[RMDB]
RNA sequence: GGGAACGACUCGAGUAGAGUCGAAAAGCACCGCAAAGCCGCGGCAAGUGGAGUUAGCGAGAAGAGACUAGGCUUUGGUUUCUUCAAGUGAAGCGGUCACCAAUCAGGUGUGGUAGUUACCGUAAAAAUAACCGCUCUUUGUUCGCAAAGAGCGGAACUUUUUAUACUCCUUCGGGAGUAUAAAAAGAAAAGAAACAACAACAACAAC
Reactivity to DMS in 0.01 (KOAc 150mM, MgCl2 10mM, bicine 150mM(pH8.5), 24C), signal-to-noise 1, nucleotides 027 to 156: g020c040a110c000c000g010c040a050a100a180g020c030c050g000c030g000g020c030a080a090g030u000g020g010a140g020u010u000a190g000c000g000a300g010a030a030g000a110g000a040c000u000a060g030g000c210u010u010u000g030g030u000u000u000c030u000u010c000a030a300g020u000g010a080a190g000c020g000g000u000c000a110c050c010a080a200u000c120a120g020g070u000g000u000g030g010u010a100g010u000u000a070c030c020g020u010a010a120a100a050a060u000a080a230c000c000g010c000u010c000u010u000u020g020u010u030c230g020c010a010a020a020g000a030g040c000g010g020a010a000
Reactivity to 2A3 in 0.01 (KOAc 150mM, MgCl2 10mM, bicine 150mM(pH8.5), 24C), signal-to-noise 2, nucleotides 027 to 156: g020c010a010c000c010g020c030a120a000a070g060c000c040g010c050g080g030c130a100a060g050u080g040g050a120g030u150u160a030g020c040g010a060g010a080a000g010a000g020a020c010u040a070g120g190c040u210u140u120g020g010u000u010u000c000u010u010c020a040a040g000u040g030a050a020g010c000g010g020u050c000a020c010c030a020a100u170c060a050g180g000u030g050u060g070g000u040a030g030u060u080a050c030c010g000u050a040a120a000a000a060u110a080a070c000c000g000c000u000c000u030u000u020g020u050u070c090g010c090a000a000a010g000a010g000c010g010g000a000a000
Source: RMDB library M2RFPK, as collected in RNAgym. This 207-nucleotide RNA was probed chemically with DMS and 2A3. The RNA was probed in 150 mM KOAc, 10 mM MgCl2 and 150 mM bicine (pH 8.5) at 24 C.